[RMDB]
RNA sequence: GGGAACGACUCGAGUAGAGUCGAAAAGAAGACGUGACGAAAAGUCACGUCAAUACAGAGACUACGCAACUCUGAAAGACACAACAAAAGUGUAAAAGCGUAGCAGGAUCGAGAGAUCCUGAAAAGAGCUACGACUUUUAUUCGUAAAAGUCGUAGCAAAAGAAACAACAACAACAAC
Reactivity to 2A3 in 0.01 (KOAc 150mM, MgCl2 10mM, bicine 150mM(pH8.5), 24C), signal-to-noise 3, nucleotides 027 to 126: g170a110a020g020a000c000g010u010g000a010c020g080a150a170a070a060g010u010c000a000c000g000u000c020a000a000u060a020c000a000g010a000g010a010c000u010a000c000g010c030a080a010c020u000c010u000g010a010a040a030g160a000c000a000c000a120a080c080a120a290a060a050g010u040g010u060a030a050a010a000g030c010g010u000a000g000c000a000g000g010a000u000c000g010a010g010a020g000a130u000c000c000u000g010a000a000a000a020g080a010
Reactivity to DMS in 0.01 (KOAc 150mM, MgCl2 10mM, bicine 150mM(pH8.5), 24C), signal-to-noise 3, nucleotides 027 to 126: g040a300a140g000a020c010g010u010g000a010c000g000a140a070a050a230g000u010c000a010c020g020u000c000a030a040u020a280c010a000g000a000g000a180c020u000a000c040g000c060a140a060c010u010c000u030g000a070a160a080g000a030c000a010c010a070a140c270a070a150a130a060g000u000g040u000a020a070a050a300g010c000g010u000a000g030c000a000g000g000a020u000c020g000a150g030a140g000a010u000c010c000u000g000a010a040a110a080g000a130

The data come from the RNA Mapping Database (RMDB), library OK1LIB.
This 177-nucleotide RNA was probed chemically with 2A3 and DMS.
The DMS profile rests on 4,198 reads.
The RNA was probed in 150 mM KOAc, 10 mM MgCl2 and 150 mM bicine (pH 8.5) at 24 C.
For 2A3, 4,664 sequencing reads were counted.